[RMDB]
RNA sequence: GGGAACGACUCGAGUAGAGUCGAAAAGUCUCUUCUAAGAACGAAAGGUUAAAGCAGGUCGAGGUCGAAGAUGGACUCGUACUCUCCACUUCAUUGCUUGAUUGCAUGCUAAUCAGAUUCUUCCUUUCUCUCGCCGGGUAGCCGUUGCUGCUUAAGCCCGUAGGGAUAUCUUCGGAUAUCCCUACGGAAAAGAAACAACAACAACAAC
Reactivity to DMS in 0.01 (KOAc 150mM, MgCl2 10mM, bicine 150mM(pH8.5), 24C), signal-to-noise 2, nucleotides 027 to 156: g010u000c040u000c010u010u000c070u010a050a090g000a120a110c070g010a060a040a110g020g050u010u000a030a060a130g000c030a120g030g020u000c020g020a060g060g020u010c060g020a070a070g000a160u000g010g000a040c140u010c100g000u000a100c080u000c040u010c010c010a060c010u010u010c020a160u000u000g010c040u000u000g020a080u000u010g000c050a100u000g000c070u010a040a100u000c030a070g010a150u000u010c020u010u010c010c000u000u000u000c000u000c020u000c020g010c030c000g000g010g020u000a060g020c010c090g030u000u000g020c000u000g000c000u010u000a050a210g000c090
Reactivity to 2A3 in 0.01 (KOAc 150mM, MgCl2 10mM, bicine 150mM(pH8.5), 24C), signal-to-noise 3, nucleotides 027 to 156: g020u000c020u000c000u120u120c050u110a100a100g030a110a050c060g050a080a050a020g030g000u140u140a160a100a030g000c030a020g010g050u020c020g020a020g020g110u240c280g030a030a010g070a180u030g000g010a010c030u020c130g040u130a100c050u030c010u000c100c000a020c010u010u020c010a090u060u300g070c000u000u000g010a040u050u070g050c080a040u040g000c020u040a080a010u090c040a050g050a230u050u000c020u050u050c000c010u050u090u000c030u010c010u010c040g060c030c010g040g000g030u040a030g000c050c050g080u060u110g010c010u010g000c010u060u030a060a030g030c000
An RNA of 207 nucleotides, treated with DMS and 2A3 and read out base by base. The RNA was probed in 150 mM KOAc, 10 mM MgCl2 and 150 mM bicine (pH 8.5) at 24 C. For 2A3, 1,627 sequencing reads were counted. Values cover nucleotides 27 to 156. For DMS, 3,893 sequencing reads were counted.